[RMDB]
RNA sequence: GGGAACGACUCGAGUAGAGUCGAAAAUGGGCGGCCUGGGCGCAACUGGACGAGGUGACCCGCGGCGACGGUCGGGUCGUGCCGUUCAGCCGCAUCCAGAAGAUCCAGAGCCUGGAGGGCGGCAUCACAGUAUGCACUCAUUCGUGAGUGCAUACUGAAAAGAAACAACAACAACAAC
Reactivity to DMS in 0.01 (KOAc 150mM, MgCl2 10mM, bicine 150mM(pH8.5), 24C), signal-to-noise 4, nucleotides 027 to 126: u000g010g000g030c050g020g010c070c020u010g000g010g010c040g000c140a090a110c010u000g010g010a030c040g010a130g010g020u010g000a050c150c110c080g010c130g000g010c080g000a050c040g010g010u000c050g010g020g020u000c060g020u000g020c030c000g010u000u000c040a150g020c020c010g000c010a080u000c010c010a070g010a150a130g000a150u010c040c040a060g000a220g000c060c010u000g010g000a070g000g010g020c030g010g020c020a060u010c100a200
Reactivity to 2A3 in 0.01 (KOAc 150mM, MgCl2 10mM, bicine 150mM(pH8.5), 24C), signal-to-noise 2, nucleotides 027 to 126: u080g020g030g030c050g010g010c020c020u070g030g020g000c020g000c040a060a090c040u040g020g010a010c040g060a070g070g030u140g040a080c040c040c090g000c000g010g020c030g010a050c000g010g050u080c020g000g030g020u070c020g000u070g090c010c010g010u020u050c040a010g000c020c010g000c010a010u000c010c000a030g030a120a030g060a100u070c020c010a030g020a030g050c010c020u060g060g080a060g060g060g000c050g030g020c020a040u130c020a020